[RMDB]
RNA sequence: GGGAACGACUCGAGUAGAGUCGAAAAGCUUUUUCGAAAGCCUGAUUGAUAUGGAGCAGAACUACGGUGUUUGACAGCGUUGAAAGUAGAUCGGAAACGAUCUACUGGAGCUGUCAUACACCGCUGCUCCUAAGUCGCCAAGUCCAUUCGUGGACAACGUAGCUGGUAAGUUCGCUUACCAGCUACGAAAAGAAACAACAACAACAAC
Reactivity to 2A3 in 0.01 (KOAc 150mM, MgCl2 10mM, bicine 150mM(pH8.5), 24C), signal-to-noise 6, nucleotides 027 to 156: g020c000u050u030u050u100u250c250g120a060a000a010g010c030c030u170g080a190u150u220g010a010u030a020u110g010g010a010g000c000a000g020a090a030c090u160a070c300g010g000u000g000u020u010u000g000a010c000a000g010c020g230u250u010g000a000a000a000g000u000a000g000a000u010c000g010g000a030a020a010c000g000a000u000c000u000a000c000u000g000g000a010g000c000u000g000u000c000a000u000a000c000a000c000c000g000c000u000g000c000u010c000c000u000a000a000g000u000c010g010c060c040a130a030g020u000c000c010a040u100u150c270g170u090g000g000a010c000a020a020
Reactivity to DMS in 0.01 (KOAc 150mM, MgCl2 10mM, bicine 150mM(pH8.5), 24C), signal-to-noise 2, nucleotides 027 to 156: g010c020u040u000u000u000u000c290g020a110a030a060g020c000c010u010g000a150u000u000g030a160u000a160u000g000g000a020g060c010a140g010a210a240c020u010a170c000g000g000u000g000u120u000u010g010a030c000a000g020c020g030u000u010g020a110a210a080g000u000a000g010a000u000c000g020g000a120a140a220c000g020a020u000c000u000a000c000u000g000g050a130g000c010u000g030u000c000a010u000a030c000a010c010c000g000c020u000g000c010u000c010c010u000a000a020g020u000c020g020c030c050a070a130g000u000c000c000a110u010u030c250g020u000g020g000a020c000a090a150
Chemical mapping of a 207-nucleotide RNA with 2A3 and DMS. The RNA was probed in 150 mM KOAc, 10 mM MgCl2 and 150 mM bicine (pH 8.5) at 24 C. Source: RMDB library RNAMAK, as collected in RNAgym. DMS (dimethyl sulfate) methylates the pairing face of unpaired adenines and cytosines. As a SHAPE reagent, 2A3 marks flexible, mostly unpaired nucleotides at the ribose 2'-OH. For 2A3, 6,130 sequencing reads were counted.